[RMDB]
RNA sequence: GGGAACGACUCGAGUAGAGUCGAAAAUUUAUUGGCCGUGAGGGAAAUGCCCUUCAGAACUUCCAGCGUUCCGAAGUUCUUAUGGAUAUUUUCUGCCACCAGGGUGGGCUGCGUACCGUCCAUUCGCAUAUCCACGAUAUUUCGAUAUCGUGGAUAUAAAAGAAACAACAACAACAAC
Reactivity to DMS in 0.01 (KOAc 150mM, MgCl2 10mM, bicine 150mM(pH8.5), 24C), signal-to-noise 6, nucleotides 027 to 126: u020u030u030a090u020u010g010g010c050c140g030u020g030a300g000g010g000a020a020a040u010g000c030c000c000u000u000c160a020g010a020a020c010u000u010c020c220a130g050c040g000u010u000c020c030g000a020a020g010u000u000c000u000u000a050u000g010g010a050u000a030u000u010u010u010c000u000g000c060c070a050c090c080a070g000g000g030u000g000g000g010c020u010g010c070g020u020a070c090c080g010u010c030c050a070u000u010c040g010c170
Reactivity to 2A3 in 0.01 (KOAc 150mM, MgCl2 10mM, bicine 150mM(pH8.5), 24C), signal-to-noise 9, nucleotides 027 to 126: u160u170u110a180u060u090g070g000c070c050g040u090g090a110g000g030g020a010a020a020u040g020c000c000c000u010u010c020a000g000a010a000c000u010u010c040c050a120g050c090g090u130u040c030c030g010a000a000g000u000u000c000u010u020a030u040g020g000a010u010a030u080u030u010u020c020u090g120c050c010a040c040c040a060g020g010g030u050g010g030g000c030u050g020c060g070u060a080c020c010g020u010c010c000a040u060u060c030g000c070

The record gives the reactivity of an RNA of 177 nucleotides to DMS and 2A3.
DMS adducts were read by reverse transcription with MarathonRT.
For DMS, 17,298 sequencing reads were counted.
For 2A3 the reverse transcriptase was SuperScript II with manganese.
The reactions ran in a buffer of 150 mM KOAc, 10 mM MgCl2 and 150 mM bicine (pH 8.5), at 24 C.
The data come from the RNA Mapping Database (RMDB), library OK1LIB.
High 2A3 reactivity points to a flexible backbone, as in loops and unpaired stretches.